[RMDB]
RNA sequence: GGGAACGACUCGAGUAGAGUCGAAAAAUGAUUGCAAAUGCCAGUUAAAUUAUGAAUUGCAAUCUCUUAAAUUAAAAUGGCAUAUCCGUUGGAAUCAAUAGUAGUACGAGGAAUAAGGACAUAUUCAAUCCUGAGGAUUAUUCGUAAUCCUCAGGAUAAAAGAAACAACAACAACAAC
Reactivity to 2A3 in 0.01 (KOAc 150mM, MgCl2 10mM, bicine 150mM(pH8.5), 24C), signal-to-noise 2, nucleotides 027 to 126: a000u110g010a000u000u010g000c000a000a000a090u060g040c000c020a030g100u130u120a020a120a230u160u080a060u140g120a120a090u090u030g000c030a050a030u000c020u020c000u060u120a080a090a090u090u110a040a000a020a110u010g030g010c000a000u020a030u040c000c060g130u060u090g100g050a070a000u100c020a080a100u080a100g160u050a010g040u030a050c050g100a040g010g010a020a020u030a050a020g070g010a010c020a030u080a080u130u110c000a050
Reactivity to DMS in 0.01 (KOAc 150mM, MgCl2 10mM, bicine 150mM(pH8.5), 24C), signal-to-noise 3, nucleotides 027 to 126: a070u010g000a010u010u000g000c010a000a070a050u000g010c020c020a070g020u010u010a080a070a110u000u000a070u010g010a100a100u000u000g000c100a040a040u010c060u000c110u000u010a030a040a100u020u010a030a050a060a080u000g010g010c010a040u020a110u010c070c090g040u010u000g000g010a100a080u000c030a080a060u010a090g000u000a050g010u000a060c080g010a090g000g010a050a040u000a050a070g010g000a080c110a080u000a070u000u010c120a100